[RMDB]
RNA sequence: GGGAACGACUCGAGUAGAGUCGAAAAGGGGUCUGAAGCGUAGAAUGACAUGCGACCAUACACUGAAGCCUCCACGGUGUAUAAUUACAUCGCAACAGCAUUCUGAUCUUCAGACGGAGGCACCCAAAACAACUGACUCCUUCGGGAGUCAGUUGAACACGGUAUAUACCUUCGGGUAUAUACCGUGAAAAGAAACAACAACAACAAC
Reactivity to 2A3 in 0.01 (KOAc 150mM, MgCl2 10mM, bicine 150mM(pH8.5), 24C), signal-to-noise 3, nucleotides 027 to 156: g100g010g040g010u000c000u010g000a000a000g000c070g130u300a020g010a000a020u020g060a130c110a170u140g000c000g000a010c000c050a000u000a010c010a000c000u010g010a060a020g000c000c000u000c020c000a000c010g010g010u010g030u010a010u030a030a140u220u140a070c090a130u040c000g000c020a070a130c060a230g230c000a020u000u000c000u020g020a120u120c000u000u000c000a000g000a000c010g000g000a000g000g000c000a020c010c000c000a020a080a010a030c010a000a000c000u000g000a000c000u010c000c000u070u130c270g070g000g020a000g000u020c000a000g000u000u000g000a010a000
Reactivity to DMS in 0.01 (KOAc 150mM, MgCl2 10mM, bicine 150mM(pH8.5), 24C), signal-to-noise 1, nucleotides 027 to 156: g020g000g030g050u000c000u040g010a020a040g030c170g000u040a090g010a020a030u010g000a160c090a300u000g020c000g000a040c060c090a150u010a050c020a050c010u040g000a070a180g040c060c000u000c000c010a300c000g000g000u010g010u000a030u010a070a130u030u000a100c080a110u000c010g000c030a030a170c210a110g020c010a040u000u000c040u020g010a080u020c070u010u000c010a030g030a010c000g000g010a040g030g040c030a140c000c010c000a060a080a140a140c010a010a030c000u020g000a020c010u000c000c000u000u010c260g050g070g040a040g010u000c000a000g010u000u000g000a040a220
Chemical mapping of a 207-nucleotide RNA with 2A3 and DMS. The reactions ran in a buffer of 150 mM KOAc, 10 mM MgCl2 and 150 mM bicine (pH 8.5), at 24 C. Reactivities are given for positions 27 through 156. For 2A3, 2,992 sequencing reads were counted. DMS (dimethyl sulfate) methylates the pairing face of unpaired adenines and cytosines.